Record summary
This 207-nucleotide RNA was probed chemically with 2A3. The reactions ran in a buffer of 150 mM KOAc, 10 mM MgCl2 and 150 mM bicine (pH 8.5), at 24 C. 2A3 adducts were read by reverse transcription with SuperScript II with manganese.

RNA sequence: GGGAACGACUCGAGUAGAGUCGAAAACAGGGCGAAACCAGUGUGGUAUGGUAUGGCGAGGCUUGCCUCGGAGUCAAGCGGGAGGGCUCUCGGAGCGCCGCACGGGCGCAGUGCUGCGCGAAACUCUAGGCCCGUGACUGUUACGGACAAAUUCCGUCUGGUUAUUAUCCUUCGGGAUAAUAACCAGAAAAGAAACAACAACAACAAC
Reactivity to 2A3 in 0.01 (KOAc 150mM, MgCl2 10mM, bicine 150mM(pH8.5), 24C), signal-to-noise 1, nucleotides 027 to 156: c010a050g030g000g080c030g040a120a010a020c020c040a080g030u040g010u050g140g060u160a080u080g030g040u080a030u110g100g000c050g000a030g000g060c030u040u120g030c010c000u000c070g010g020a010g010u060c040a000a080g070c010g010g050g010a010g010g020g010c020u040c000u040c040g110g000a030g000c010g000c000c000g030c010a000c060g080g010g070c050g000c080a000g010u020g050c020u000g000c040g000c010g070a040a010a000c020u040c070u120a070g140g000c040c030c000g000u030g010a050c040u050g050u160u070a010c030g000g010a030c060a100a200a100u170u010c010c010g000u020